[RMDB]
RNA sequence: GGGAACGACUCGAGUAGAGUCGAAAAUGAAAGCUGUGUGAGCGAGGCGGGCGGAGGAUGAGGCCGAGCCCGGGCUCUGGCUGCAGCCGCCCGGGGACACGCCGUGCACCCUCGGGCUCCGGAAAAAGGUAUUGGAGGAUUUCGAUCCUCCAAUACCAAAAGAAACAACAACAACAAC
Reactivity to DMS in 0.01 (KOAc 150mM, MgCl2 10mM, bicine 150mM(pH8.5), 24C), signal-to-noise 1, nucleotides 027 to 126: u030g000a070a090a090g000c000u000g000u010g010u000g000a080g000c050g000a080g040g000c040g020g010g000c010g010g000a110g010g000a130u000g000a190g040g030c000c040g000a300g000c000c020c030g020g000g020c000u010c080u000g060g030c020u000g000c130a060g020c070c060g010c000c000c010g000g010g000g030a060c090a080c130g010c110c100g010u000g000c070a070c080c010c040u000c000g090g000g000c030u000c010c050g010g000a030a030a050a150a060

This 177-nucleotide RNA was probed chemically with DMS. For DMS the reverse transcriptase was MarathonRT. DMS (dimethyl sulfate) methylates the pairing face of unpaired adenines and cytosines. Conditions: 150 mM KOAc, 10 mM MgCl2 and 150 mM bicine (pH 8.5), 24 C.